Structure probing data (2A3 and DMS) for a 177-nucleotide construct. It was measured as part of the RMDB library OK2TST. The RNA was probed in 150 mM KOAc, 10 mM MgCl2 and 150 mM bicine (pH 8.5) at 24 C. For DMS, 3,184 sequencing reads were counted.
[RMDB]
RNA sequence: GGGAACGACUCGAGUAGAGUCGAAAAUAGAAGAGACAGAGAGGAAGCAAAACCUUCUACCUCAAAACAUUUCUAAGACAUCUCUUCCAUGAAGACCAGAAUGUGGUAGCUUGCUUCUGUGAUAACAAAAUAUUAGCAGGUUCGCCUGCUAAUAUUUAAAAGAAACAACAACAACAAC
Reactivity to 2A3 in 0.01 (KOAc 150mM, MgCl2 10mM, bicine 150mM(pH8.5), 24C), signal-to-noise 2, nucleotides 027 to 126: u130a000g010a010a040g040a000g000a030c020a050g130a010g020a040g040g040a040a000g000c030a010a030a140a150c000c020u060u100c000u010a030c000c000u050c060a070a070a000a020c010a090u130u150u000c050u070a110a030g050a120c030a090u030c020u000c000u030u000c030c000a080u160g100a100a000g020a030c000c070a010g060a030a070u080g050u030g010g000u020a010g030c060u050u030g000c000u020u050c000u030g080u140g130a130u160a180a040c070a060
Reactivity to DMS in 0.01 (KOAc 150mM, MgCl2 10mM, bicine 150mM(pH8.5), 24C), signal-to-noise 5, nucleotides 027 to 126: u000a050g010a030a040g010a040g010a060c250a050g000a180g020a190g020g000a020a030g010c030a050a050a130a140c170c120u030u010c020u000a040c050c000u000c070a080a080a110a160c070a070u000u010u010c060u010a120a120g010a090c170a120u000c010u000c010u010u000c010c040a060u010g000a060a060g000a130c060c020a100g000a040a060u000g000u000g010g010u000a020g020c300u000u000g020c020u000u000c010u000g010u000g000a100u000a060a110c160a060